[RMDB]
RNA sequence: GGGAACGACUCGAGUAGAGUCGAAAAUGCUGAUCGUGCCAUUCGUCGGCGACGUCGCGCAGACACCCGUCGUGGUCGCGAACAUCGUUGCGCCGCCGGGAACGACGGGCGCCUCGAGUGAGAGCACGCUCGGCGGCUCCUACGUCGUGCCGGCCGGUAGAUAUCGUUGAUUCGUCAACGAUAUCUAAAAAGAAACAACAACAACAAC
Reactivity to 2A3 in 0.01 (KOAc 150mM, MgCl2 10mM, bicine 150mM(pH8.5), 24C), signal-to-noise 4, nucleotides 027 to 156: u140g010c030u030g000a090u050c010g010u030g020c000c000a050u130u090c070g040u000c040g030g040c060g020a070c040g030u010c010g000c030g040c190a020g020a030c010a060c010c000c000g030u040c030g050u030g020g020u190c090g020c010g040a050a030c010a090u160c110g300u300u120g030c020g010c010c000g010c000c000g020g020g050a150a010c010g000a000c000g010g030g020c000g000c000c000u010c010g010a000g010u030g010a180g030a040g060c110a040c090g000c010u000c000g000g020c050g030g000c000u020c000c000u030a120c050g040u010c000g010u000g040c010c000g000g030c070c010g020g000
Reactivity to DMS in 0.01 (KOAc 150mM, MgCl2 10mM, bicine 150mM(pH8.5), 24C), signal-to-noise 2, nucleotides 027 to 156: u000g010c060u000g000a040u000c030g040u000g040c010c030a210u000u000c030g030u000c050g020g000c000g030a040c100g030u000c030g010c060g040c050a130g020a110c050a100c020c010c060g040u010c080g060u000g000g010u010c020g010c020g010a080a110c080a100u000c040g000u000u000g010c020g000c010c010g030c000c030g000g010g000a120a020c010g000a020c010g010g030g030c080g010c030c020u000c010g010a090g010u000g010a160g020a170g000c100a130c030g030c030u010c000g020g000c100g000g000c020u000c010c000u000a060c080g040u000c040g030u000g000c030c040g030g010c030c000g000g000

The data come from the RNA Mapping Database (RMDB), library OK3TST. This 207-nucleotide RNA was probed chemically with 2A3 and DMS. Values cover nucleotides 27 to 156. DMS adducts were read by reverse transcription with MarathonRT. For 2A3, 3,333 sequencing reads were counted. For 2A3 the reverse transcriptase was SuperScript II with manganese. The DMS profile rests on 5,107 reads.